Chemical mapping of a 177-nucleotide RNA with 2A3 and DMS. For 2A3, 5,487 sequencing reads were counted.

RNA sequence: GGGAACGACUCGAGUAGAGUCGAAAACAACAAGCGGCGGGCGAAGAAUGGCGAGCCGCCGCUGGAUAUCGCUGCGAUCCCGCUGGAUGAUAAGAAAAGCUUCGACAUGCUGCAACGCUCGGAAACCCCUUAUGACCAAAUUCGUUUGGUCAUAAGGAAAAGAAACAACAACAACAAC
Reactivity to 2A3 in 0.01 (KOAc 150mM, MgCl2 10mM, bicine 150mM(pH8.5), 24C), signal-to-noise 4, nucleotides 027 to 126: c020a010a000c020a050a030g000c000g020g000c020g050g030g020c040g060a050a020g160a200a140u190g150g030c010g030a030g090c010c000g000c010c000g010c010u010g000g000a050u040a030u110c050g000c080u060g020c030g050a070u040c030c030c000g000c030u030g010g030a080u050g010a030u110a160a050g070a040a090a020a010g010c010u030u040c020g010a020c010a070u090g020c010u010g010c010a040a050c040g010c020u030c040g050g070a070a120a110c000c030
Reactivity to DMS in 0.01 (KOAc 150mM, MgCl2 10mM, bicine 150mM(pH8.5), 24C), signal-to-noise 6, nucleotides 027 to 126: c070a090a160c070a130a060g020c000g020g010c020g010g020g010c040g000a100a090g000a120a090u010g020g010c020g010a130g020c020c010g010c000c010g010c010u010g000g000a130u010a040u010c050g000c020u000g000c040g010a090u000c030c040c030g020c060u000g020g020a050u010g010a100u010a070a110g000a070a080a090a100g010c060u000u000c040g010a090c050a070u000g000c030u000g010c050a060a080c130g000c120u000c050g030g000a080a080a150c080c060

Reactivities are given for positions 27 through 126. For DMS the reverse transcriptase was MarathonRT. For DMS, 5,804 sequencing reads were counted. It was measured as part of the RMDB library OK2TRN. The reactions ran in a buffer of 150 mM KOAc, 10 mM MgCl2 and 150 mM bicine (pH 8.5), at 24 C.